[RMDB]
RNA sequence: GGGAACGACUCGAGUAGAGUCGAAAACUUCGCGUGGACCGUUGCCGGUAGACCGCUCGCUAGAUUGGCGGGCGAAUAUGGCGCACAGAGGCAAACCGGGCGAAAUCCCUAUCCAGGCUCACCACGGUAGGAUGAUCACAUUCGUGUGAUCAUCCUAAAAAGAAACAACAACAACAAC
Reactivity to 2A3 in 0.01 (KOAc 150mM, MgCl2 10mM, bicine 150mM(pH8.5), 24C), signal-to-noise 2, nucleotides 027 to 126: c020u010u010c040g000c020g300u040g060g040a120c060c060g090u110u120g000c000c020g030g000u010a050g080a110c050c010g000c000u010c000g010c010u090a090g030a300u030u300g070g000c000g030g000g000c030g000a010a000u170a060u050g100g000c040g000c030a060c010a050g170a080g100g000c040a020a020a080c020c000g020g000g000c000g000a040a010a040u030c010c010c000u020a070u000c070c000a040g020g020c010u030c030a060c000c010a020c040g070g000
Reactivity to DMS in 0.01 (KOAc 150mM, MgCl2 10mM, bicine 150mM(pH8.5), 24C), signal-to-noise 2, nucleotides 027 to 126: c130u000u000c030g000c050g020u000g010g000a170c080c070g030u000u010g010c020c020g000g000u000a050g000a120c160c000g000c010u000c010g000c000u000a110g000a120u020u010g000g000c000g000g010g020c000g000a070a030u010a130u000g000g040c050g000c080a060c110a080g010a100g000g020c020a070a090a130c100c010g000g000g020c010g000a030a070a110u000c020c010c000u000a100u000c060c060a060g000g000c050u000c040a060c000c020a110c130g020g020

Structure probing data (2A3 and DMS) for a 177-nucleotide construct. Values cover nucleotides 27 to 126. For DMS the reverse transcriptase was MarathonRT. For 2A3, 1,373 sequencing reads were counted. Conditions: 150 mM KOAc, 10 mM MgCl2 and 150 mM bicine (pH 8.5), 24 C. The data come from the RNA Mapping Database (RMDB), library OK2TRN.